[RMDB]
RNA sequence: GGGAACGACUCGAGUAGAGUCGAAAAACGUGUAUGUGGAAGACCGCACGGUCGAUGUCCACAUUCGUCGCCUGCGUAAAGCACUGGAGCCCGGCGGGCAUGACCGCAUGGUGCAGACCGUGCGCGGCGGAAAUUAUGUCUUCGGACAUAAUUUCCGAAAAGAAACAACAACAACAAC
Reactivity to 2A3 in 0.01 (KOAc 150mM, MgCl2 10mM, bicine 150mM(pH8.5), 24C), signal-to-noise 2, nucleotides 027 to 126: a000c050g030u060g020u040a020u050g000u010g000g020a030a030g030a030c010c000g100c180a050c180g010g010u000c010g030a070u150g140u000c000c000a000c000a020u020u010c010g090u050c050g040c000c000u030g020c010g020u100a180a170a040g000c000a010c060u080g030g010a020g000c010c000c000g010g030c030g020g000g000c140a170u190g140a080c000c010g000c050a080u170g030g010u150g010c000a010g010a050c000c000g000u000g000c010g000c000g020g010
Reactivity to DMS in 0.01 (KOAc 150mM, MgCl2 10mM, bicine 150mM(pH8.5), 24C), signal-to-noise 3, nucleotides 027 to 126: a140c030g010u000g010u000a010u000g030u000g000g000a060a130g000a030c030c000g020c250a070c240g020g000u000c010g020a140u010g000u010c010c010a010c010a020u010u000c020g000u000c050g010c020c020u010g020c030g000u000a110a160a190g020c010a040c040u000g010g000a150g000c020c020c010g020g000c010g010g010g010c110a080u010g000a100c030c020g020c010a030u010g000g010u010g010c060a080g000a120c040c030g020u000g000c020g000c050g020g000

Chemical mapping of a 177-nucleotide RNA with 2A3 and DMS. The data come from the RNA Mapping Database (RMDB), library OK2TST. For DMS, 3,148 sequencing reads were counted. The reactions ran in a buffer of 150 mM KOAc, 10 mM MgCl2 and 150 mM bicine (pH 8.5), at 24 C. DMS (dimethyl sulfate) methylates the pairing face of unpaired adenines and cytosines. DMS adducts were read by reverse transcription with MarathonRT.